This 177-nucleotide RNA was probed chemically with 2A3 and DMS. For DMS the reverse transcriptase was MarathonRT. For 2A3, 2,590 sequencing reads were counted. The reactions ran in a buffer of 150 mM KOAc, 10 mM MgCl2 and 150 mM bicine (pH 8.5), at 24 C.
[RMDB]
RNA sequence: GGGAACGACUCGAGUAGAGUCGAAAAUGACAAUACUGAAAUAAGCUAUGAAUUCACACUUAAGCAUUGGAAGGAAGUCUCUCUUAUAAAAUUCAAGAAAUGUUUUGAUGCAGACGCAGGUGAGGAAUCUAAUCGUAAAUUUCGAUUUACGAUUAGAAAAAGAAACAACAACAACAAC
Reactivity to 2A3 in 0.01 (KOAc 150mM, MgCl2 10mM, bicine 150mM(pH8.5), 24C), signal-to-noise 3, nucleotides 027 to 126: u110g010a000c000a030a100u060a080c030u030g050a010a050a110u050a110a020g030c040u050a040u230g080a080a100u190u110c040a030c000a010c080u080u090a070a010g000c000a040u010u040g030g010a040a030g020g020a040a040g020u000c000u000c000u010c000u060u060a140u140a170a190a100a090u170u100c040a040a030g080a120a160a050u060g040u010u090u090u130g020a030u060g000c010a000g020a070c060g000c060a020g050g020u020g030a020g040g040a030a030
Reactivity to DMS in 0.01 (KOAc 150mM, MgCl2 10mM, bicine 150mM(pH8.5), 24C), signal-to-noise 6, nucleotides 027 to 126: u010g000a070c080a080a100u000a100c030u010g000a080a090a110u000a060a120g000c050u010a080u000g010a100a110u000u010c070a070c080a070c080u000u000a080a090g000c020a050u000u000g000g010a100a050g000g010a080a120g010u000c040u010c020u000c030u010u020a100u010a070a050a080a100u020u020c060a020a080g000a060a070a080u010g000u000u000u010u010g000a040u010g010c050a050g000a060c130g020c090a020g010g000u000g020a080g000g010a090a100